[RMDB]
RNA sequence: GGGAACGACUCGAGUAGAGUCGAAAACUUUGUCCCCCUGCAGCGGGAUCACCAGUACCGAGCCCAACUGGCAUUGAGGCGAAAGGCUGCAGCGAUAGGGCUGAGCAUUGCCAUCGGCGAACAACACGUACCCACAUUGAUUCGUCAAUGUGGGUACAAAAGAAACAACAACAACAAC
Reactivity to 2A3 in 0.01 (KOAc 150mM, MgCl2 10mM, bicine 150mM(pH8.5), 24C), signal-to-noise 2, nucleotides 027 to 126: c030u110u110u250g070u070c000c010c000c030c010u010g000c000a020g000c040g020g000g100a070u080c050a010c040c030a010g030u080a070c010c070g090a030g060c000c010c000a020a040c010u060g040g000c020a110u020u110g040a080g060g060c070g060a120a000a010g110g000c010u000g090c020a010g020c000g030a050u130a180g050g000g000c050u010g010a030g040c090a110u040u120g010c010c020a080u070c110g090g000c000g010a040a030c040a010a020c070a020c100
Reactivity to DMS in 0.01 (KOAc 150mM, MgCl2 10mM, bicine 150mM(pH8.5), 24C), signal-to-noise 2, nucleotides 027 to 126: c100u000u000u000g000u010c000c010c020c090c030u010g010c010a010g040c000g010g000g000a100u000c110a070c020c040a050g000u000a070c120c030g030a110g000c030c000c030a110a070c050u010g000g000c120a090u030u010g000a130g000g010c070g020a050a060a140g010g010c020u000g000c000a020g010c050g000a140u000a090g020g000g010c020u000g010a150g000c040a030u010u010g000c040c020a050u000c120g010g000c090g000a030a020c090a000a060c120a080c280